[RMDB]
RNA sequence: GGGAACGACUCGAGUAGAGUCGAAAAGACGCCUGUGUGGCGAAGCGAGUAUGAGAAAGGGCCGCAAAUUAAACAGUCCAUCUAGCGGCAAGAUGGAUUGCUCGCAAAAAGAUCCAUAUCACGGAGACGGUAAUGAGUACUUCGGUACUCAUUACCGAAAAGAAACAACAACAACAAC
Reactivity to 2A3 in 0.01 (KOAc 150mM, MgCl2 10mM, bicine 150mM(pH8.5), 24C), signal-to-noise 3, nucleotides 027 to 126: g080a000c000g110c000c000u170g080u130g050u110g130g010c040g020a090a000g020c000g000a000g000u050a110u200g080a040g150a110a130a020g180g020g000c000c020g000c030a080a110a040u120u100a110a160a000c060a030g080u020c000c000a000u000c000u040a060g010c000g000g000c010a030a000g010a000u010g010g000a000u000u040g010c010u000c000g000c000a020a030a030a030a030g040a000u010c000c000a020u110a050u170c060a040c080g010g000a040g050a080
Reactivity to DMS in 0.01 (KOAc 150mM, MgCl2 10mM, bicine 150mM(pH8.5), 24C), signal-to-noise 2, nucleotides 027 to 126: g000a190c070g000c010c000u040g020u010g060u070g020g030c020g000a100a100g050c000g000a060g000u030a070u010g000a300g010a070a050a130g020g040g000c020c010g000c080a030a120a060u050u020a000a050a140c040a040g000u000c000c000a000u040c060u020a110g000c010g000g000c000a070a020g030a030u000g020g000a090u010u000g000c080u000c020g000c020a060a070a050a120a090g000a160u020c000c030a060u030a080u050c090a080c140g000g000a050g000a170
The record gives the reactivity of an RNA of 177 nucleotides to 2A3 and DMS.
The data come from the RNA Mapping Database (RMDB), library OK1LIB.
The DMS profile rests on 2,392 reads.
DMS adducts were read by reverse transcription with MarathonRT.